RNA sequence: GGGAACGACUCGAGUAGAGUCGAAAAAAGGUGAAAACUGAGUUCUUAAAAGUCAGCAUGUGAAGUGGGUUUUUAAGAAUCCACAGGAUGAAUAAAUAGUCAUGCUGGGGACAAGAAAUUAUAAGACGCAAUAUGGUGUAUUCGUACACCAUAUUGCAAAAGAAACAACAACAACAAC
Reactivity to DMS in 0.01 (KOAc 150mM, MgCl2 10mM, bicine 150mM(pH8.5), 24C), signal-to-noise 2, nucleotides 027 to 126: a040a110g000g010u000g010a120a060a090a070c020u000g000a160g020u010u000c040u000u000a060a100a120a130g010u010c000a010g020c010a020u000g000u010g010a170a080g040u000g010g010g000u000u000u000u000u040a110a110g000a020a030u000c000c000a010c000a070g020g010a120u000g000a110a110u000a080a110a110u010a100g030u020c010a000u000g000c000u000g010g010g000g000a090c160a040a050g000a080a030a110u000u020a110u010a060a080g010a160c200
Reactivity to 2A3 in 0.01 (KOAc 150mM, MgCl2 10mM, bicine 150mM(pH8.5), 24C), signal-to-noise 2, nucleotides 027 to 126: a010a000g000g000u050g020a020a000a030a020c040u040g010a000g050u040u010c010u020u020a060a100a020a100g110u080c000a010g020c010a010u000g020u040g100a120a040g000u010g020g000g010u000u030u000u000u070a120a080g020a010a000u000c000c000a000c000a000g100g050a110u110g050a050a040u120a110a150a060u050a000g100u050c000a000u010g020c000u030g000g000g070g000a010c070a040a030g090a030a070a010u250u130a120u110a190a000g100a030c090